About this RNA: Source: RMDB library M2PK90, as collected in RNAgym. The record gives the reactivity of an RNA of 177 nucleotides to DMS. The DMS profile rests on 915 reads. The RNA was probed in 150 mM KOAc, 10 mM MgCl2 and 150 mM bicine (pH 8.5) at 24 C.

[RMDB]
RNA sequence: GGGAACGACUCGAGUAGAGUCGAAAAUUAAAAUGUGCGUCCCUCCCGAAGCUGCGCGCUCGGUCGAUGAGGACGACCACAGCCGAUAGAGGACUGACGGUCUUCGGUCAAGGGAAAAAGAAAAAAACAUUUUCCCCUAGUUCGCUAGGGGAAAAUGAAAAGAAACAACAACAACAAC
Reactivity to DMS in 0.01 (KOAc 150mM, MgCl2 10mM, bicine 150mM(pH8.5), 24C), signal-to-noise 2, nucleotides 027 to 126: u000u000a050a060a080a070u020g020u000g030c050g030u000c010c000c030u000c020c000c000g000a110a060g040c040u010g020c130g040c100g050c050u010c000g000g000u000c100g010a070u010g020a120g030g000a010c010g030a030c110c020a030c040a040g010c020c020g020a120u010a120g020a030g000g000a030c020u030g010a110c160g000g000u010c000u010u000c030g000g000u000c050a050a150g010g010g010a010a060a070a070a100g020a040a000a040a080a080a010a060